[RMDB]
Source information
This 177-nucleotide RNA was probed chemically with 2A3 and DMS. The data come from the RNA Mapping Database (RMDB), library M2PK50. Conditions: 150 mM KOAc, 10 mM MgCl2 and 150 mM bicine (pH 8.5), 24 C. The DMS profile rests on 2,826 reads.

RNA sequence: GGGAACGACUCGAGUAGAGUCGAAAAUGCUGAGCUUUCGAGCUCAGCAGAGGCAAGCAAGCAGCGCAACGAGACAAGACGAGCAUAAGAUGGAGCAUGCUACAAUACGGCACUUCGGUGCCGUAAAUAUUUGACUAGACUUCGGUCUAGUCAAAUAAAAAGAAACAACAACAACAAC
Reactivity to 2A3 in 0.01 (KOAc 150mM, MgCl2 10mM, bicine 150mM(pH8.5), 24C), signal-to-noise 1, nucleotides 027 to 126: u040g040c010u000g000a000g000c000u040u070u210c260g080a030g000c000u010c000a010g000c000a030g000a000g030g000c060a010a080g010c000a000a050g020c040a010g010c020g040c030a010a020c030g040a010g000a070c010a040a000g080a070c060g030a020g020c020a020u030a160a050g060a070u130g030g000a040g020c020a010u060g000c000u020a020c020a060a020u020a030c000g030g030c000a030c000u000u050c280g070g000u000g000c000c000g000u000a010a010a010
Reactivity to DMS in 0.01 (KOAc 150mM, MgCl2 10mM, bicine 150mM(pH8.5), 24C), signal-to-noise 3, nucleotides 027 to 126: u000g010c000u000g000a000g000c000u000u000u020c170g030a040g030c000u000c000a010g000c000a010g010a050g010g000c070a050a080g030c070a090a070g000c040a040g020c080g010c050a040a050c060g010a060g010a080c080a080a050g000a070c120g020a080g000c050a070u010a050a070g020a110u010g000g010a050g010c050a030u000g020c060u010a060c140a060a150u000a010c010g000g000c000a000c000u000u010c140g020g020u010g010c000c000g000u000a000a030a070